Annotation
Chemical mapping of a 177-nucleotide RNA with DMS and 2A3. Reactivities are given for positions 27 through 126. The RNA was probed in 150 mM KOAc, 10 mM MgCl2 and 150 mM bicine (pH 8.5) at 24 C. For DMS, 1,193 sequencing reads were counted.
RNA sequence: GGGAACGACUCGAGUAGAGUCGAAAAUGAGCCGCACCGCGAGAUAGUCGGCCACGCUGCUCAUCGCAACCCGGUCCUGCGUCAUGGCGUCACGCUCCCGCACGGUGACGGCAUUGUCCUGCAGCGAACGCGAUGGGCAGUUCGCUGCCCAUCGCGUAAAAGAAACAACAACAACAAC
Reactivity to DMS in 0.01 (KOAc 150mM, MgCl2 10mM, bicine 150mM(pH8.5), 24C), signal-to-noise 1, nucleotides 027 to 126: u000g000a090g000c010c030g010c030a170c060c010g020c020g000a080g020a150u010a120g010u000c050g010g000c090c080a120c160g000c030u000g000c040u000c040a010u010c090g000c070a150a150c070c010c040g000g010u000c040c000u000g010c000g080u000c110a050u000g010g010c000g020u000c000a040c050g020c070u000c070c040c050g030c120a150c050g010g020u000g020a050c000g000g010c020a040u010u000g000u000c020c050u000g010c030a020g010c130g000a090
Reactivity to 2A3 in 0.01 (KOAc 150mM, MgCl2 10mM, bicine 150mM(pH8.5), 24C), signal-to-noise 1, nucleotides 027 to 126: u000g000a000g000c000c000g000c000a030c010c020g000c030g000a040g080a140u190a040g160u230c000g050g000c100c000a050c160g000c000u010g000c010u020c010a010u010c050g050c070a100a100c040c020c000g030g040u030c010c030u000g000c040g090u030c010a030u070g050g140c020g010u000c000a020c030g010c060u000c040c040c020g110c030a110c130g100g020u020g020a010c010g000g090c000a030u040u140g040u060c030c000u120g000c020a000g010c010g120a050